The record gives the reactivity of an RNA of 207 nucleotides to DMS and 2A3. For 2A3 the reverse transcriptase was SuperScript II with manganese. Reactivities are given for positions 27 through 156.
[RMDB]
RNA sequence: GGGAACGACUCGAGUAGAGUCGAAAAGUGGGAGGAUCACUUGAGGCCAGGUGUUUGAGACCAGCCUGGGUAACAGAGUGAGAUCCCUUCUCUACGAAAAUAAAAAUUAAAAAAUUAGUUGAGCAUGGAGGUGCACACCUGUAGUCUUAGCUGCUACUAACUAAAUUCUGUUCGCAGAAUUUAGUUAAAAAGAAACAACAACAACAAC
Reactivity to DMS in 0.01 (KOAc 150mM, MgCl2 10mM, bicine 150mM(pH8.5), 24C), signal-to-noise 2, nucleotides 027 to 156: g060u000g050g030g000a070g030g020a210u000c010a000c010u000u010g000a190g000g020c010c010a040g040g010u000g020u000u010u020g010a230g010a090c070c040a220g000c000c000u010g020g000g000u000a030a110c050a210g010a040g000u000g010a100g000a190u000c000c010c010u010u000c010u000c000u000a300c060g000a090a070a070a080u030a040a100a060a050a150u020u030a010a070a080a120a040a180u020u000a100g000u000u000g030a060g010c040a020u010g010g020a080g010g010u020g040c070a100c060a040c000c000u010g030u010a080g010u010c060u000u000a120g030c010u010g010c010u010a120c100
Reactivity to 2A3 in 0.01 (KOAc 150mM, MgCl2 10mM, bicine 150mM(pH8.5), 24C), signal-to-noise 2, nucleotides 027 to 156: g070u080g010g010g000a030g070g130a070u010c010a000c010u000u040g020a030g070g090c000c010a030g000g020u020g040u050u270u210g140a110g000a040c060c000a010g000c000c010u030g000g040g020u080a020a030c030a040g070a000g060u000g000a010g000a030u000c000c020c000u010u020c010u000c000u010a030c020g010a040a010a030a070u180a050a100a030a000a040u220u280a110a180a050a060a040a100u130u080a020g040u030u040g010a000g010c070a040u070g010g030a020g000g050u040g020c030a030c000a040c060c030u040g030u040a030g010u010c030u060u070a030g020c030u050g000c040u100a030c050
The reactions ran in a buffer of 150 mM KOAc, 10 mM MgCl2 and 150 mM bicine (pH 8.5), at 24 C. As a SHAPE reagent, 2A3 marks flexible, mostly unpaired nucleotides at the ribose 2'-OH. Reactivities are rounded to 0.1 and cut off at 0 and 3.